[RMDB]
RNA sequence: GGGAACGACUCGAGUAGAGUCGAAAAACGGCUGGCUACGGCCAGCCGAAUCGGGCCAAAGGCAGUCGCCCGACGACACAGGCGAUCGGUCGCCCAAGCGCUGCACACGACUAUACGUAGUCGUGAAUUGAUCACGCAACCUUCGGGUUGCGUGAAAGAACAAGAUAAGCUUCGGCUUAUCUUGUUCAAAAGAAACAACAACAACAAC
Reactivity to 2A3 in 0.01 (KOAc 150mM, MgCl2 10mM, bicine 150mM(pH8.5), 24C), signal-to-noise 1, nucleotides 027 to 156: a000c000g010g000c000u000g000g010c000u020a050c190g120g000c030c100a000g070c020c000g000a000a000u010c000g000g000g000c040c060a080a050a090g110g020c000a000g010u030c010g030c000c080c000g030a030c040g000a000c030a020c060a130g230g020c090g030a120u110c050g140g020u000c000g030c000c000c000a020a020g020c060g000c000u010g000c010a000c000a000c040g000a000c010u010a000u040a110c290g200u020a040g000u000c000g000u000g000a000a010u010u130g050a070u010c000a000c020g000c000a000a000c000c000u070u060c140g120g000g000u000u000g010c000g020u000g000a000a000a000
The record gives the reactivity of an RNA of 207 nucleotides to 2A3. The RNA was probed in 150 mM KOAc, 10 mM MgCl2 and 150 mM bicine (pH 8.5) at 24 C. For 2A3, 730 sequencing reads were counted.